[RMDB]
RNA sequence: GGGAACGACUCGAGUAGAGUCGAAAACUCCAGCCAGCUGGAACUGUUUCUCAUCGACUGGGAAAGACCGCGGAGCAGCUGCGAAGGACAACGCCUGAAUCUGGACAGCUCAUCUCUCUGCUCUAGAGAUCGGUACUAGGUUCGCCUAGUACCGAUCAAAAGAAACAACAACAACAAC
Reactivity to DMS in 0.01 (KOAc 150mM, MgCl2 10mM, bicine 150mM(pH8.5), 24C), signal-to-noise 2, nucleotides 027 to 126: c070u000c030c010a100g030c060c050a070g050c000u000g000g020a100a110c090u010g000u010u000u010c010u000c040a080u000c170g010a130c140u000g010g010g020a040a090a070g030a080c100c100g000c020g030g020a140g040c130a080g030c060u000g020c060g000a120a080g000g000a070c090a010a110c170g000c050c010u010g000a040a080u010c070u000g060g010a140c080a030g000c060u000c060a100u000c050u000c030u020c020u000g010c070u000c010u000a040g000a300
Reactivity to 2A3 in 0.01 (KOAc 150mM, MgCl2 10mM, bicine 150mM(pH8.5), 24C), signal-to-noise 1, nucleotides 027 to 126: c000u020c000c000a000g040c030c020a030g000c040u040g000g040a050a080c030u020g020u120u070u020c040u000c000a060u090c070g170a130c110u080g000g000g040a060a040a000g070a040c000c090g030c060g020g000a040g020c050a010g040c020u060g020c020g030a050a050g030g000a030c030a080a040c170g040c040c040u110g050a060a090u040c050u030g000g030a030c010a020g000c000u010c030a030u030c050u000c010u000c040u050g020c000u010c000u050a030g030a000